[RMDB]
RNA sequence: GGGAACGACUCGAGUAGAGUCGAAAAGGAUCGCCCUUCAUUUAUGGGGAGCAUUUUUUCUGUAUGAUCGCAUUGCCUCCACAACAAUGUACCGAGGCAAAGUCUUCACUGAAGGGAACAUAGCAGCGUAUGCUUCGAUUUUCGAAUCGAAGCAUACAAAAGAAACAACAACAACAAC
Reactivity to 2A3 in 0.01 (KOAc 150mM, MgCl2 10mM, bicine 150mM(pH8.5), 24C), signal-to-noise 8, nucleotides 027 to 126: g100g010a080u100c060g040c010c000c000u020u030c030a100u020u090u220a160u140g000g000g000g020a020g010c020a060u040u070u050u040u040u110c080u090g110u090a130u140g050a060u080c060g020c100a060u010u020g000c000c000u010c020c020a030c020a170a090c030a080a090u200g010u050a090c030c070g010a000g000g000c000a000a000a010g020u010c000u000u030c040a050c050u050g000a010a010g020g000g030a010a030c050a060u170a020g090c060a000g020c020
Reactivity to DMS in 0.01 (KOAc 150mM, MgCl2 10mM, bicine 150mM(pH8.5), 24C), signal-to-noise 5, nucleotides 027 to 126: g000g000a090u010c110g010c000c000c000u010u010c010a040u040u030u010a070u030g010g000g020g000a050g000c210a030u000u010u010u000u010u000c000u000g010u030a090u040g000a020u010c300g030c010a150u000u000g010c000c000u000c010c180a070c110a120a130c290a140a100u010g000u000a070c200c300g000a000g000g000c000a000a010a030g010u000c080u000u000c010a070c300u020g010a040a020g010g000g010a070a060c120a090u020a110g010c150a080g000c130
The data come from the RNA Mapping Database (RMDB), library OK1LIB. An RNA of 177 nucleotides, treated with 2A3 and DMS and read out base by base. For DMS, 7,515 sequencing reads were counted. For 2A3, 8,142 sequencing reads were counted. DMS adducts were read by reverse transcription with MarathonRT. 2A3 adducts were read by reverse transcription with SuperScript II with manganese.